The record gives the reactivity of an RNA of 177 nucleotides to DMS and 2A3. For 2A3 the reverse transcriptase was SuperScript II with manganese.
RNA sequence: GGGAACGACUCGAGUAGAGUCGAAAAGAUAUGGAGGUUGAAGGUCUUUGAUCGGAGGGCUCGGAAACGAGCCUCCGGGAGACCCAACCUCCUAAGUCAAAGGAGAAGCUCUUCGGAGCUUCUCCAAGUCUUCUCUAUAGUUCGCUAUAGAGAAGACAAAAGAAACAACAACAACAAC
Reactivity to DMS in 0.01 (KOAc 150mM, MgCl2 10mM, bicine 150mM(pH8.5), 24C), signal-to-noise 1, nucleotides 027 to 126: g000a020u000a040u000g010g010a020g000g010u000u000g000a190a110g040g020u000c000u010u000u030g000a060u010c000g000g000a040g010g020g010c000u000c010g010g000a000a010a050c010g000a010g010c000c010u000c010c000g000g010g000a000g020a020c010c010c010a000a010c000c000u010c010c010u000a000a050g010u000c020a120a130a240g000g010a000g010a040a020g010c000u000c000u000u030c250g040g010a010g030c000u000u000c000u010c000c000a010a030
Reactivity to 2A3 in 0.01 (KOAc 150mM, MgCl2 10mM, bicine 150mM(pH8.5), 24C), signal-to-noise 2, nucleotides 027 to 126: g000a000u000a000u040g000g020a010g010g030u070u010g100a300a240g120g000u100c010u300u300u030g000a010u020c000g000g000a040g080g110g120c000u000c020g010g000a020a000a000c000g010a000g000c010c000u000c010c020g000g000g000a030g000a000c000c010c000a000a000c000c000u010c000c010u000a000a020g000u000c010a030a110a110g000g020a030g000a020a000g000c010u010c000u100u190c300g050g010a000g010c020u010u020c000u000c000c000a000a000
Values cover nucleotides 27 to 126. The reactions ran in a buffer of 150 mM KOAc, 10 mM MgCl2 and 150 mM bicine (pH 8.5), at 24 C. For DMS the reverse transcriptase was MarathonRT.